[RMDB]
RNA sequence: GGGAACGACUCGAGUAGAGUCGAAAAGAUAUGGAAUGCAAGGGAGAAUACUGUCGGAAACGACAGCUAUUCGAGGAUCUUGGCAUUCCUAAGUCAAAAGUAACCCUAUCUUCGGAUAGGGUUACAACGUAUUGCAGCACUUCGGUGCUGCAAUACGAAAAGAAACAACAACAACAAC
Reactivity to DMS in 0.01 (KOAc 150mM, MgCl2 10mM, bicine 150mM(pH8.5), 24C), signal-to-noise 1, nucleotides 027 to 126: g040a000u000a010u020g010g010a040a010u000g010c020a000a020g000g000g000a000g030a040a000u000a010c000u000g000u010c000g030g020a050a010a030c000g010a020c000a000g000c300u000a000u010u000c000g010a080g030g010a010u000c000u000u000g010g020c000a010u000u000c000c000u000a000a050g030u010c000a190a030a150a150g000u000a030a020c000c000c000u000a010u000c000u000u000c300g020g010a010u010a000g000g000g040u000u000a000c010a000a110

Chemical mapping of a 177-nucleotide RNA with DMS. DMS adducts were read by reverse transcription with MarathonRT. Values cover nucleotides 27 to 126. It was measured as part of the RMDB library TTRDES. For DMS, 989 sequencing reads were counted.